Background
An RNA of 177 nucleotides, treated with DMS and 2A3 and read out base by base. The 2A3 profile rests on 2,759 reads.
RNA sequence: GGGAACGACUCGAGUAGAGUCGAAAAACGUAAUGUGCCCGGCUGACCAGUUGUCUGAUCCUAAUUAUGAUGCCUUGUUGAUUUCUAUGACUAAUCAUAGUUUCAGUGUGCAAAAACACAUUGGCGCCACAGACUAUAAGUUCGCUUAUAGUCUGUGAAAAGAAACAACAACAACAAC
Reactivity to DMS in 0.01 (KOAc 150mM, MgCl2 10mM, bicine 150mM(pH8.5), 24C), signal-to-noise 5, nucleotides 027 to 126: a090c090g010u010a080a060u000g020u000g020c030c010c040g020g010c040u000g010a070c060c040a080g010u000u000g000u000c040u000g010a120u000c020c030u000a060a070u000u000a060u010g000a090u000g010c070c060u000u010g010u010u000g000a120u000u000u000c010u010a060u010g000a090c200u010a120a080u000c030a020u010a030g000u000u000u010c020a040g020u000g010u010g000c050a040a060a060a130a150c010a010c000a050u000u000g010g020c210g000c120
Reactivity to 2A3 in 0.01 (KOAc 150mM, MgCl2 10mM, bicine 150mM(pH8.5), 24C), signal-to-noise 3, nucleotides 027 to 126: a000c020g020u080a110a010u130g030u090g060c000c020c000g040g050c010u020g020a050c000c020a100g000u090u040g030u110c020u050g030a070u030c000c000u020a070a060u120u110a100u170g090a040u080g030c010c050u050u070g050u040u030g030a170u020u060u040c000u020a050u020g040a050c040u130a120a070u080c020a050u020a060g010u040u020u010c000a000g010u000g030u000g050c030a100a050a020a080a010c000a000c020a040u010u020g030g000c000g020c000